[RMDB]
RNA sequence: GGGAACGACUCGAGUAGAGUCGAAAAUCAAGCUGCGAAGUGAUGAUACCUAAGGGCACUGGUGACAUUCUAGUAGAUUGUUCAGGUGGGCAGCAACAUUUUUUAAAGGACAACCUGGUUGACCUAGGAUGUCCCAAAAUUCCAUUAUUAGGCAAAACGGCAGAUAACAUUUCGAUGUUAUCUGCCGAAAAGAAACAACAACAACAAC
Reactivity to 2A3 in 0.01 (KOAc 150mM, MgCl2 10mM, bicine 150mM(pH8.5), 24C), signal-to-noise 2, nucleotides 027 to 156: u070c000a000a110g010c000u010g000c030g170a060a020g080u070g050a150u040g020a010u110a170c000c020u070a120a120g000g000g020c060a010c110u090g000g050u160g020a010c030a010u040u000c030u000a060g020u020a130g070a230u050u070g020u060u130c040a030g000g010u040g010g030g000c010a000g040c000a030a010c000a030u010u020u020u060u170u290a090a200a090g070g000a030c000a010a030c010c000u040g020g010u030u090g210a110c000c000u000a000g020g000a030u000g010u030c000c000c010a000a030a000a060u040u000c000c000a010u030u110a040u090u010a020g050g010c070a160a000a000a020